[RMDB]
This 177-nucleotide RNA was probed chemically with DMS and 2A3.
As a SHAPE reagent, 2A3 marks flexible, mostly unpaired nucleotides at the ribose 2'-OH.
2A3 adducts were read by reverse transcription with SuperScript II with manganese.
Reactivities are given for positions 27 through 126.

RNA sequence: GGGAACGACUCGAGUAGAGUCGAAAAUGGUCAUGAACGCACCCAUGUGUCUUCCUUUAGUUCCAGAGCAAGCUACUUUUUAUUACCAGGUCAAGUGCAAUGGAUCCAGUGCUUCUAUACCCUGUUCAAUUCAUUGGCGGUUCGCCGCCAAUGAAUUAAAAGAAACAACAACAACAAC
Reactivity to DMS in 0.01 (KOAc 150mM, MgCl2 10mM, bicine 150mM(pH8.5), 24C), signal-to-noise 1, nucleotides 027 to 126: u100g000g010u000c040a150u010g020a020a070c000g040c110a100c040c040c020a020u000g000u020g000u030c020u030u030c000c030u000u060u020a130g010u000u000c040c030a080g020a220g000c030a000a050g030c040u000a000c070u020u030u070u010u010a010u080u010a100c160c000a040g000g010u000c060a030a010g000u070g010c030a050a040u000g000g000a000u050c040c090a040g000u000g000c050u000u020c070u000a040u030a090c010c040c060u000g000u020u000c140
Reactivity to 2A3 in 0.01 (KOAc 150mM, MgCl2 10mM, bicine 150mM(pH8.5), 24C), signal-to-noise 2, nucleotides 027 to 126: u180g030g000u060c020a030u080g070a080a000c050g000c010a060c030c030c020a070u080g040u050g020u010c030u000u010c030c000u000u000u100a060g000u140u010c000c010a010g000a000g120c040a030a000g020c000u030a080c020u050u060u120u030u030a100u190u070a070c030c000a030g010g000u010c040a100a050g020u010g090c070a050a040u100g000g010a000u040c020c030a050g020u030g070c000u080u000c000u040a040u070a050c030c000c020u070g070u080u020c050